[RMDB]
This 177-nucleotide RNA was probed chemically with DMS and 2A3. 2A3 adducts were read by reverse transcription with SuperScript II with manganese. The reactions ran in a buffer of 150 mM KOAc, 10 mM MgCl2 and 150 mM bicine (pH 8.5), at 24 C. Reactivities are given for positions 27 through 126.
RNA sequence: GGGAACGACUCGAGUAGAGUCGAAAAAACGCGGAGACGUCGGCAGGAGUCCUGGGAAGAGUUCUCUUUUCUUCUUGACGGCCUAUCACCCUGAAAUCGGUUUGUCCGGAGCUAGGGUUUCAUGGCCAUAGGAGUUUACCUUCGGGUAAACUCCUAUAAAAGAAACAACAACAACAAC
Reactivity to DMS in 0.01 (KOAc 150mM, MgCl2 10mM, bicine 150mM(pH8.5), 24C), signal-to-noise 1, nucleotides 027 to 126: a040a020c120g050c000g060g000a030g020a050c030g020u000c010g000g020c060a010g000g010a140g000u010c070c020u000g010g010g000a090a050g000a060g000u030u010c100u010c040u010u010u010u000c030u010u000c040u000u000g000a080c190g000g000c010c000u000a230u070c280a070c000c000c030u000g010a050a070a130u010c000g000g000u000u050u100g010u040c020c030g070g000a060g030c180u020a020g010g000g000u020u000u000c140a070u020g010g000c020c010
Reactivity to 2A3 in 0.01 (KOAc 150mM, MgCl2 10mM, bicine 150mM(pH8.5), 24C), signal-to-noise 2, nucleotides 027 to 126: a000a000c060g030c010g020g010a060g000a030c060g020u110c040g010g070c000a030g030g030a000g050u000c000c000u010g000g040g050a090a000g010a020g070u100u060c030u040c010u110u050u060u000c000u030u000c030u020u040g110a100c150g040g000c000c000u080a040u250c060a030c010c000c030u030g050a150a130a100u110c000g000g080u120u170u250g070u060c000c000g030g010a040g030c000u080a020g070g020g000u000u040u060c060a060u060g000g000c000c000
The DMS profile rests on 2,039 reads.